Chemical mapping of a 207-nucleotide RNA with 2A3. The reactions ran in a buffer of 150 mM KOAc, 10 mM MgCl2 and 150 mM bicine (pH 8.5), at 24 C. Reactivities are given for positions 27 through 156. 2A3 adducts were read by reverse transcription with SuperScript II with manganese. Source: RMDB library OK3TST, as collected in RNAgym.
[RMDB]
RNA sequence: GGGAACGACUCGAGUAGAGUCGAAAAGAGGCAGGCUGACCUCACUACUCGCCCACGUCCAGAUCACCAAGACAGGUGGCACCUUGGGAAGAGGUCUCUAGGACCACUCUUUGCAAGUUCCUCCAUUUAUAGGGGGAAGGUUGAGGUUUAAACAGGGGACUGAGUAGUACUUCGGUACUACUCAGUCAAAAGAAACAACAACAACAAC
Reactivity to 2A3 in 0.01 (KOAc 150mM, MgCl2 10mM, bicine 150mM(pH8.5), 24C), signal-to-noise 1, nucleotides 027 to 156: g030a020g040g110c230a000g030g000c100u080g000a090c000c000u020c020a050c040u080a030c000u000c030g040c010c010c010a010c020g130u090c050c030a060g030a300u100c030a040c040c040a110a000g220a190c120a060g030g000u000g020g000c010a100c010c030u030u010g020g010g060a010a070g010a020g100g000u000c000u000c020u040a080g030g000a010c000c000a050c040u080c050u010u030u080g130c030a050a050g020u020u040c010c010u000c000c000a080u080u300u240a150u270a080g000g030g000g000g000a050a000g040g000u060u130g030a050g000g000u020u060u140a030a150a030c150a070g070g030g030